This 207-nucleotide RNA was probed chemically with 2A3 and DMS. As a SHAPE reagent, 2A3 marks flexible, mostly unpaired nucleotides at the ribose 2'-OH. Source: RMDB library OK3TST, as collected in RNAgym. The RNA was probed in 150 mM KOAc, 10 mM MgCl2 and 150 mM bicine (pH 8.5) at 24 C. For 2A3 the reverse transcriptase was SuperScript II with manganese.
RNA sequence: GGGAACGACUCGAGUAGAGUCGAAAAGAAAAAAGUCUGGUUACCAACUUUAUAGACUGUGAUAAUAAGUAACCAUGUGUAAAAUCCUUAGAACAUGGUAAAAGACAACAUACAGAUAUUGAGCAUUCAGCACGUGUUUGCUUAAUACUAGAAUGUACAAACCAAAUUCGUUCGCGAAUUUGGUUUGAAAAGAAACAACAACAACAAC
Reactivity to 2A3 in 0.01 (KOAc 150mM, MgCl2 10mM, bicine 150mM(pH8.5), 24C), signal-to-noise 1, nucleotides 027 to 156: g150a000a050a010a000a020a000g020u010c010u040g060g080u060u050a140c020c030a070a130c030u030u160u200a170u050a100g020a000c030u020g020u050g070a040u050a190a050u070a070a140g040u010a000a000c000c000a020u020g030u030g000u060a040a040a000a170u200c030c000u020u020a030g020a110a000c000a000u000g030g000u000a030a030a000a000g050a030c040a070a000c000a090u110a080c040a040g060a020u000a000u000u000g000a000g050c010a010u000u000c010a010g100c100a030c280g040u030g000u030u010u000g000c020u020u010a010a020u020a030c030u000a040g120a100a040u070g010u090a010
Reactivity to DMS in 0.01 (KOAc 150mM, MgCl2 10mM, bicine 150mM(pH8.5), 24C), signal-to-noise 2, nucleotides 027 to 156: g010a000a120a090a090a070a090g010u010c030u020g010g020u000u010a210c060c050a150a130c060u000u000u000a120u020a110g000a070c020u010g020u010g000a090u000a040a110u000a060a080g000u000a140a060c010c000a020u010g020u000g010u000a040a120a070a100u010c020c030u000u020a210g020a050a050c010a010u020g000g010u000a000a090a100a170g000a150c110a050a050c080a060u000a100c060a180g030a070u000a020u010u000g010a050g010c020a020u000u000c040a110g040c190a040c140g000u010g000u020u000u000g020c000u000u000a010a010u000a000c040u000a150g020a160a070u000g000u020a150